RNA sequence: GGGAACGACUCGAGUAGAGUCGAAAAUACCUUGAGUAUUGCUGAACUCAGUUUAGCGUGCAUGCUCUUGGCUAUUCUCAUAGUGAUUGUCAAAUUUGGAGUUACUUAUUCGUCAAUUCAAUAUUUAAAAAGGUGCCGAUGUUCGCAUCGGCACCAACUAUGAACUAGAGUUCGCUCUAGUUCAUAGAAAAGAAACAACAACAACAAC
Reactivity to DMS in 0.01 (KOAc 150mM, MgCl2 10mM, bicine 150mM(pH8.5), 24C), signal-to-noise 1, nucleotides 027 to 156: u000a040c020c010u000u000g010a020g050u000a040u000u010g090c000u000g000a050a040c040u000c110a300g040u000u000u000a040g000c000g020u000g020c070a230u000g030c000u010c000u000u000g070g060c060u000a100u010u000c020u000c030a180u000a140g020u000g000a120u010u000g000u010c030a060a080a160u010u010u000g060g010a230g010u020u000a100c070u000u000a090u010u010c070g030u000c050a020a090u010u000c040a080a040u010a020u000u000u010a070a030a070a100a110g010g030u000g060c000c010g030a010u000g000u050u010c300g050c000a020u000c000g020g010c000a010c000c000a000a030
Reactivity to 2A3 in 0.01 (KOAc 150mM, MgCl2 10mM, bicine 150mM(pH8.5), 24C), signal-to-noise 2, nucleotides 027 to 156: u140a010c000c000u000u000g000a000g030u030a050u100u140g000c020u010g010a030a020c070u060c300a120g030u080u070u040a050g030c060g000u070g070c040a010u010g010c000u000c000u000u020g000g000c010u030a050u040u000c010u010c020a060u070a070g160u110g000a020u030u060g000u040c020a000a050a050u000u040u080g110g010a140g130u110u170a100c010u050u060a030u100u000c000g020u010c000a020a030u040u000c030a040a090u090a300u190u220u230a170a100a020a060a020g000g000u000g000c040c000g020a000u000g070u080u120c150g030c060a000u000c010g000g000c000a000c000c010a000a000
Record summary: Conditions: 150 mM KOAc, 10 mM MgCl2 and 150 mM bicine (pH 8.5), 24 C. Structure probing data (DMS and 2A3) for a 207-nucleotide construct. Source: RMDB library M2RFPK, as collected in RNAgym. For DMS, 2,311 sequencing reads were counted.